[RMDB]
RNA sequence: GGGAACGACUCGAGUAGAGUCGAAAAAAUCACGUAAAUCCAAAGCUGCAAAUUAUCAGUUGCCAAUGAUGACAACUACGGUGCUCAACUAGCUGCGUAAGUAGCUUUUUGUUACACCAUCUAGCGGUACGCCGCUAGCGGUUUUUAACAAGGUGCCCUUACCACGCAAGUUCGCUUGCGUGGUAAGAAAAGAAACAACAACAACAAC
Reactivity to DMS in 0.01 (KOAc 150mM, MgCl2 10mM, bicine 150mM(pH8.5), 24C), signal-to-noise 1, nucleotides 027 to 156: a090a050u010c060a090c080g000u000a090a070a110u000c040c090a110a000a160g050c000u000g050c050a060a120a090u010u000a120u000c070a060g030u000u000g020c000c020a050a090u020g000a170u000g020a040c010a030a030c000u000a080c020g040g060u000g020c010u000c000a000a020c030u000a040g010c060u050g000c050g020u010a120a170g000u000a030g010c020u000u000u000u010u000g010u030u010a010c080a020c000c010a060u010c010u000a000g000c000g030g040u000a090c240g060c020c000g030c010u000a010g040c130g040g020u000u000u000u000u050a030a040c060a050a060g060g000u010g010c030c080
Reactivity to 2A3 in 0.01 (KOAc 150mM, MgCl2 10mM, bicine 150mM(pH8.5), 24C), signal-to-noise 3, nucleotides 027 to 156: a000a000u130c090a050c080g050u090a000a050a070u070c070c020a100a050a030g010c040u090g020c080a060a050a230u160u080a170u220c050a030g020u030u000g000c030c040a080a110u160g070a090u100g020a070c020a020a010c020u130a070c120g000g000u010g020c010u000c010a010a020c010u020a000g000c000u040g010c010g060u090a110a130g010u000a020g000c000u000u020u000u000u010g050u030u060a020c000a000c000c000a020u020c000u010a000g000c010g000g010u040a040c210g030c050c000g010c000u000a010g010c030g020g010u000u030u000u040u140a090a030c050a070a010g050g020u030g010c000c010